An RNA of 207 nucleotides, treated with DMS and 2A3 and read out base by base. DMS adducts were read by reverse transcription with MarathonRT. Values cover nucleotides 27 to 156. The data come from the RNA Mapping Database (RMDB), library RNAMAK.
RNA sequence: GGGAACGACUCGAGUAGAGUCGAAAAGUAUGUUUCGACAUACCCUUGAUCCUAAGUCGAGUUUCUGUCGCCGAGUGUACUUGUCAGUCGGAAACGACUUGGAUUUAGUACAUAUCGACAGAACUCGAUAUGGACGGAUGGUUAGUUCGCUAACCAAGCUGUCUUUAGGAUUCGUCCUAAAGACAGCAAAAGAAACAACAACAACAAC
Reactivity to DMS in 0.01 (KOAc 150mM, MgCl2 10mM, bicine 150mM(pH8.5), 24C), signal-to-noise 2, nucleotides 027 to 156: g030u000a010u000g010u000u000u010c150g000a100c030a030u000a020c000c010c010u000u000g000a080u010c000c010u000a100a210g010u000c010g000a030g010u000u010u000c000u000g010u000c040g030c200c120g010a300g020u010g010u000a030c020u000u000g000u000c000a030g040u000c020g010g010a130a060a300c000g020a030c010u000u010g030g020a030u000u000u000a020g000u000a030c000a020u000a170u010c000g020a060c010a080g000a020a070c020u000c000g020a010u000a090u000g000g030a060c030g020g010a200u010g010g030u000u000a080g010u000u010c230g040c020u000a030a050c000c020a040a160
Reactivity to 2A3 in 0.01 (KOAc 150mM, MgCl2 10mM, bicine 150mM(pH8.5), 24C), signal-to-noise 9, nucleotides 027 to 156: g030u030a050u120g010u010u120u160c150g080a030c020a050u100a130c030c000c020u080u220g120a260u070c020c000u070a200a040g030u000c000g010a000g000u090u200u070c020u000g010u000c010g020c120c100g150a210g130u010g000u010a010c000u010u000g010u030c000a000g000u010c000g050g010a090a080a100c020g010a000c010u040u140g130g020a030u290u130u160a000g000u000a000c000a000u040a060u030c000g000a000c000a000g000a000a000c000u000c000g000a000u000a000u010g000g010a010c030g090g050a110u100g020g000u010u000a010g020u050u070c220g000c160u000a000a000c000c000a000a040